[RMDB]
RNA sequence: GGGAACGACUCGAGUAGAGUCGAAAAGAGGAAUUGGCCUCUGUAGGGACCUGAUUUUUGAGUUACUUUCCGCCCGCUUGCCUCCCUUCCCCCUCCAAGUGGCACUGUAAAACUCAGGGCGACAAAGAUUUGACAGAGUAUUCGUACUCUGUCAAAUAAAAGAAACAACAACAACAAC
Reactivity to DMS in 0.01 (KOAc 150mM, MgCl2 10mM, bicine 150mM(pH8.5), 24C), signal-to-noise 9, nucleotides 027 to 126: g000a020g000g010a150a110u030u030g010g010c010c010u000c010u000g010u030a080g010g000g000a090c050c040u010g010a080u010u010u010u020u020g010a110g000u000u010a080c110u000u000u010c040c030g000c040c010c030g010c050u000u010g010c060c030u000c020c020c020u000u000c010c010c000c020c020u010c040c040a080a090g010u000g010g010c020a040c050u010g010u020a050a060a080a110c140u020c020a050g000g000g010c010g020a060c110a060a090a100g000
Reactivity to 2A3 in 0.01 (KOAc 150mM, MgCl2 10mM, bicine 150mM(pH8.5), 24C), signal-to-noise 9, nucleotides 027 to 126: g040a010g030g040a080a140u170u120g090g050c000c010u020c020u030g070u080a080g010g020g040a050c020c020u070g120a200u030u050u070u100u150g110a080g030u090u070a090c040u070u080u020c030c020g020c010c010c000g010c010u010u060g020c000c000u020c020c000c000u020u030c010c000c000c000c010u010c030c020a100a030g030u040g040g010c010a000c050u020g030u110a050a080a070a030c030u040c040a020g010g010g010c010g020a020c040a020a140a020g130

Description:
Chemical mapping of a 177-nucleotide RNA with DMS and 2A3. For 2A3 the reverse transcriptase was SuperScript II with manganese. Reactivities are given for positions 27 through 126.